The record gives the reactivity of an RNA of 177 nucleotides to 2A3. For 2A3, 403 sequencing reads were counted. For 2A3 the reverse transcriptase was SuperScript II with manganese. Conditions: 150 mM KOAc, 10 mM MgCl2 and 150 mM bicine (pH 8.5), 24 C.

[RMDB]
RNA sequence: GGGAACGACUCGAGUAGAGUCGAAAAACUUAAUCAAUUGAGCAACUUUCUUACCUAAUUCAUAACAUUCUUCAAGGAUUUCUUCAUUAGGCUUGAAGUCGAUUUCCAUUUGCUCGACCACUUCAAACCCUCACGACUCGUUCGCGAGUCGUGAGGGAAAAGAAACAACAACAACAAC
Reactivity to 2A3 in 0.01 (KOAc 150mM, MgCl2 10mM, bicine 150mM(pH8.5), 24C), signal-to-noise 2, nucleotides 027 to 126: a000c080u090u040a020a050u070c120a030a080u050u300g000a000g000c000a040a020c020u000u280u000c060u000u300a020c040c000u070a000a060u170u080c100a050u160a100a000c000a130u030u000c000u210u090c160a250a220g000g000a180u210u000u000c010u030u040c000a130u000u050a040g010g000c010u000u040g000a110a000g060u000c060g290a300u000u050u110c030c030a030u020u020u020g020c020u050c040g070a110c000c040a060c000u100u000c030a020a020a020